[RMDB]
RNA sequence: GGGAACGACUCGAGUAGAGUCGAAAACAUUUGCUAGACCUACUUUUUCUUUUGGGAAAUAUUUAGGAACUGAUGUAACACCAACAGAGAAAAUUGCGCCACCUACGCCAAGGAAAAAUCCUGAUGCGAGAACCAUAAAUUUCGAUUUAUGGUUCUCAAAAGAAACAACAACAACAAC
Reactivity to DMS in 0.01 (KOAc 150mM, MgCl2 10mM, bicine 150mM(pH8.5), 24C), signal-to-noise 4, nucleotides 027 to 126: c040a060u010u000u010g010c080u000a080g010a160c020c020u010a030c080u000u000u010u000u000c000u000u000u020u010g030g000g010a050a070a020u000a020u010u000u000a040g010g020a150a150c040u000g000a040u010g000u000a080a090c090a120c050c010a040a080c140a070g000a100g000a040a040a070a080u020u000g020c070g020c010c010a030c050c020u010a050c110g000c050c040a070a050g000g000a020a050a080a100a090u000c030c000u000g010a100u010g010c250
Reactivity to 2A3 in 0.01 (KOAc 150mM, MgCl2 10mM, bicine 150mM(pH8.5), 24C), signal-to-noise 3, nucleotides 027 to 126: c000a010u050u050u110g020c030u070a030g040a100c010c000u010a030c000u120u090u040u020u050c020u070u140u130u220g120g010g020a010a050a050u180a060u050u090u070a070g010g040a060a060c030u030g020a060u060g030u040a050a010c020a040c070c010a020a050c040a050g090a010g060a090a060a080a120u060u070g010c000g000c020c010a040c010c000u030a020c020g020c020c030a020a010g050g000a070a080a020a030a000u050c030c010u060g030a040u130g030c040
Chemical mapping of a 177-nucleotide RNA with DMS and 2A3.
2A3 adducts were read by reverse transcription with SuperScript II with manganese.
For DMS, 3,479 sequencing reads were counted.
It was measured as part of the RMDB library OK2TST.
Conditions: 150 mM KOAc, 10 mM MgCl2 and 150 mM bicine (pH 8.5), 24 C.